[RMDB]
RNA sequence: GGGAACGACUCGAGUAGAGUCGAAAACGGAAAUAGAAGAAAUUGUCAAGACGACAACGGAGCAGCACGAGUCCAACAGUCGCGUGGAUGGAGGCGGAGGUGUGGAAAAUGCCAGCACCAACGGCCAACACUGGUCGUAAUUCGUUACGACCAGUGUAAAAGAAACAACAACAACAAC
Reactivity to 2A3 in 0.01 (KOAc 150mM, MgCl2 10mM, bicine 150mM(pH8.5), 24C), signal-to-noise 3, nucleotides 027 to 126: c040g030g050a060a100a040u240a170g110a150a020g050a070a130a090u120u060g040u040c020a080a110g150a130c080g000a000c030a010a030c070g040g000a040g030c020a010g000c000a030c080g040a020g060u050c020c020a000a020c020a050g070u070c020g070c080g120u050g050g010a070u060g010g030a050g070g000c040g020g020a040g040g000u060g000u050g020g060a090a070a020a050u170g090c020c000a010g040c010a020c000c000a010a040c020g050g010c010c000a010
Reactivity to DMS in 0.01 (KOAc 150mM, MgCl2 10mM, bicine 150mM(pH8.5), 24C), signal-to-noise 3, nucleotides 027 to 126: c080g000g010a110a090a080u000a100g010a100a050g000a070a060a070u000u010g030u000c020a100a090g020a110c110g000a030c030a030a100c130g010g000a080g000c080a060g040c060a070c070g000a120g000u020c010c020a060a120c140a070g000u010c070g020c090g000u010g000g000a060u000g000g000a140g000g000c050g010g030a140g010g010u000g040u000g000g030a000a050a080a120u020g000c030c020a120g000c030a030c050c040a050a140c100g020g000c030c080a090